This 177-nucleotide RNA was probed chemically with 2A3 and DMS. The RNA was probed in 150 mM KOAc, 10 mM MgCl2 and 150 mM bicine (pH 8.5) at 24 C. 2A3 adducts were read by reverse transcription with SuperScript II with manganese.
RNA sequence: GGGAACGACUCGAGUAGAGUCGAAAAGAUAUGGACUCGUUGUGGACAUGAGCGAAGGGUCGGAAACGACCUCAAGCUCAACAGCCACACCGAGUCCUAAGUCAAAAGAUCGCGUUCGCGCGAUCAACUGUACAUAGGCGUUCGCGCCUAUGUACAGAAAAGAAACAACAACAACAAC
Reactivity to 2A3 in 0.01 (KOAc 150mM, MgCl2 10mM, bicine 150mM(pH8.5), 24C), signal-to-noise 1, nucleotides 027 to 126: g030a010u090a020u160g000g010a000c000u030c010g020u020u000g000u050g030g000a090c150a300u300g020a050g000c020g140a160a030g030g000g000u000c010g000g030a020a040a030c020g000a000c000c010u010c010a000a010g000c000u000c000a000a000c040a000g000c020c010a010c010a000c010c000g000a000g000u000c010c010u010a000a000g000u000c020a010a050a050a090g030a010u000c000g000c030g050u120u130c260g050c020g000c000g110a020u000c000a000a000
Reactivity to DMS in 0.01 (KOAc 150mM, MgCl2 10mM, bicine 150mM(pH8.5), 24C), signal-to-noise 2, nucleotides 027 to 126: g000a100u000a300u000g000g000a030c000u000c000g000u000u000g020u000g000g020a060c080a300u000g010a020g020c010g030a270a190g000g000g000u000c010g060g000a080a090a250c010g020a030c000c000u000c010a000a300g010c020u000c000a030a060c300a110g000c040c000a020c010a010c020c000g000a020g000u000c000c000u000a000a050g020u000c010a120a080a200a110g000a020u010c000g040c010g000u000u030c180g010c030g070c000g020a020u000c010a030a100
Annotation
It was measured as part of the RMDB library TTRDES. The DMS profile rests on 1,364 reads. For DMS the reverse transcriptase was MarathonRT. Reactivities are rounded to 0.1 and cut off at 0 and 3.